[RMDB]
RNA sequence: GGGAACGACUCGAGUAGAGUCGAAAAACUGGUGGACGAAGUCUCUGACGACUACGUGUGGUUGAGCAAACUGCUAGAUUUGGCUCCCAACUACCGUCAGCUGGAGCUGUACCAGAUUUUAGAGAGGUCUCGGACAUGCCUUCGGGCAUGUCCGAGAAAAAGAAACAACAACAACAAC
Reactivity to 2A3 in 0.01 (KOAc 150mM, MgCl2 10mM, bicine 150mM(pH8.5), 24C), signal-to-noise 1, nucleotides 027 to 126: a020c010u010g000g000u020g080g040a040c070g150a060a020g000u050c000u000c020u050g000a040c040g010a020c020u070a100c060g040u060g160u010g120g010u030u300g000a000g020c030a030a020a020c020u170g180c090u240a110g010a300u100u000u000g110g000c000u000c000c000c000a000a010c000u000a060c000c040g000u000c000a030g010c110u020g060g000a020g020c050u020g000u000a000c060c000a000g000a000u110u100u050u050a110g000a000g000a000g080g100
Background:
Source: RMDB library OK1LIB, as collected in RNAgym. Structure probing data (2A3) for a 177-nucleotide construct. The 2A3 profile rests on 499 reads. The reactions ran in a buffer of 150 mM KOAc, 10 mM MgCl2 and 150 mM bicine (pH 8.5), at 24 C. 2A3 adducts were read by reverse transcription with SuperScript II with manganese.